[RMDB]
RNA sequence: GGGAACGACUCGAGUAGAGUCGAAAAGAUAUGGAAAUGGGAAGAGCGAUAAGACCGUGAUCGGAAACGAUCACAGGUCUUUUGACGCUCGCCAUUUCCUAAGUCAAAAGGCAAGUUCGCUUGCCAACAUUGCACGAUUCUUCGGAAUCGUGCAAUGAAAAGAAACAACAACAACAAC
Reactivity to 2A3 in 0.01 (KOAc 150mM, MgCl2 10mM, bicine 150mM(pH8.5), 24C), signal-to-noise 1, nucleotides 027 to 126: g010a020u020a020u090g010g030a000a000a000u010g010g010g110a300a300g040a300g020c040g080a060u030a300a000g000a020c000c000g000u010g000a010u000c000g000g000a080a030a030c020g010a000u000c010a000c010a010g000g020u000c010u000u030u000u020g040a000c010g000c010u000c000g060c000c000a000u000u000u070c000c000u000a000a020g010u010c010a050a000a170a070g040g000c010a050a020g000u090u130c220g110c140u030u010g000c000c000a000a030
Reactivity to DMS in 0.01 (KOAc 150mM, MgCl2 10mM, bicine 150mM(pH8.5), 24C), signal-to-noise 2, nucleotides 027 to 126: g000a000u000a300u000g000g000a010a010a000u000g000g020g020a130a080g010a020g010c000g020a120u000a000a010g070a020c000c000g010u000g010a000u000c000g000g000a080a040a080c000g000a010u000c000a000c000a050g040g020u000c000u000u010u000u010g000a200c080g040c000u000c000g010c030c000a010u000u000u000c000c010u000a020a040g010u000c030a080a050a160a100g000g010c000a020a010g000u000u010c280g030c000u000u000g020c020c000a070a120
The data come from the RNA Mapping Database (RMDB), library TTRDES. This 177-nucleotide RNA was probed chemically with 2A3 and DMS. The reactions ran in a buffer of 150 mM KOAc, 10 mM MgCl2 and 150 mM bicine (pH 8.5), at 24 C. The 2A3 profile rests on 1,519 reads. The DMS profile rests on 1,929 reads. For DMS the reverse transcriptase was MarathonRT. For 2A3 the reverse transcriptase was SuperScript II with manganese.